[RMDB]
RNA sequence: GGGAACGACUCGAGUAGAGUCGAAAACGCAACAGAAAAGCUUUCCAGUAGGAGUGUGGCCACCGUGUAUCCCACAUGAGCUUCCUGAGUACACGGACAAGCUGUUCUGUUUCCCGGAGGACUGUCCUAUCUGUCCCAGGGUUAGAGAGCCAAUAUCUCACCUAGACUUGUUCGCAAGUCUAGGUGAAAAAGAAACAACAACAACAAC
Reactivity to DMS in 0.01 (KOAc 150mM, MgCl2 10mM, bicine 150mM(pH8.5), 24C), signal-to-noise 1, nucleotides 027 to 156: c020g020c070a030a070c020a050g020a040a010a030a000g030c010u010u000u000c060c110a210g000u000a110g010g020a210g020u000g010u010g030g030c050c030a030c030c060g020u000g030u010a100u010c030c000c040a190c160a060u000g030a160g000c060u000u000c040c050u030g010a280g010u000a060c020a030c060g050g010a240c100a040a040g030c000u010g000u000u000c010u000g000u000u000u030c030c000c030g000g000a230g020g010a090c020u000g000u010c100c080u000a080u000c050u000g000u000c020c020c030a300g030g010g010u000u000a020g010a040g010a040g000c030c030a030a160u010a230u000c050
Reactivity to 2A3 in 0.01 (KOAc 150mM, MgCl2 10mM, bicine 150mM(pH8.5), 24C), signal-to-noise 2, nucleotides 027 to 156: c100g000c040a040a090c010a040g020a000a100a000a010g010c010u040u020u030c050c030a020g040u110a020g050g040a030g010u070g020u070g020g030c010c010a050c020c000g020u030g030u020a100u170c040c070c000a020c020a030u090g120a030g100c030u070u080c020c040u050g020a030g000u050a020c040a030c050g020g010a020c070a010a020g000c000u020g060u040u010c000u010g020u050u100u000c030c010c000g000g060a050g010g010a020c020u050g050u110c010c080u160a240u210c060u060g020u010c000c020c000a080g000g000g020u030u080a020g010a000g000a010g020c020c020a070a040u090a140u090c060